[RMDB]
RNA sequence: GGGAACGACUCGAGUAGAGUCGAAAAUGGAAACAGCAAAGGAUGGUUUAUCUGAUCUGAAAGACAGUAUUGAUGAAAUCAUUUCUUCACUGGAAGAUGCAGCACAGUAGAAAGAAGGUGGUUAUGUUCACUACAAAAAGUUCGCUUUUUGUAGUGAAAAAGAAACAACAACAACAAC
Reactivity to 2A3 in 0.01 (KOAc 150mM, MgCl2 10mM, bicine 150mM(pH8.5), 24C), signal-to-noise 4, nucleotides 027 to 126: u100g020g020a030a040a010c010a020g030c040a040a020a020g030g010a030u030g000g020u010u020u040a020u030c020u030g030a060u020c010u030g090a180a100a030g140a040c010a010g060u090a040u120u130g040a040u050g050a020a040a030u040c020a010u020u070u050c000u040u020c030a020c010u020g020g010a060a030g020a060u090g010c020a010g020c020a020c010a050g060u100a020g040a040a070a010g030a020a000g030g020u040g020g050u050u020a030u050g030u020
Reactivity to DMS in 0.01 (KOAc 150mM, MgCl2 10mM, bicine 150mM(pH8.5), 24C), signal-to-noise 4, nucleotides 027 to 126: u000g010g000a100a080a110c040a020g020c070a070a070a040g010g010a040u000g000g010u000u000u000a050u000c020u000g030a060u010c010u000g000a150a120a110g010a120c050a020g010u010a070u010u000g010a040u000g000a030a020a050u010c030a040u000u000u010c020u000u000c100a100c050u010g000g010a060a070g000a090u000g010c050a030g000c070a060c060a050g000u010a070g010a070a040a070g000a040a060g010g020u000g000g010u010u000a060u010g010u000

Annotation
Chemical mapping of a 177-nucleotide RNA with 2A3 and DMS. 2A3 adducts were read by reverse transcription with SuperScript II with manganese. For DMS, 4,868 sequencing reads were counted. Reactivities are given for positions 27 through 126.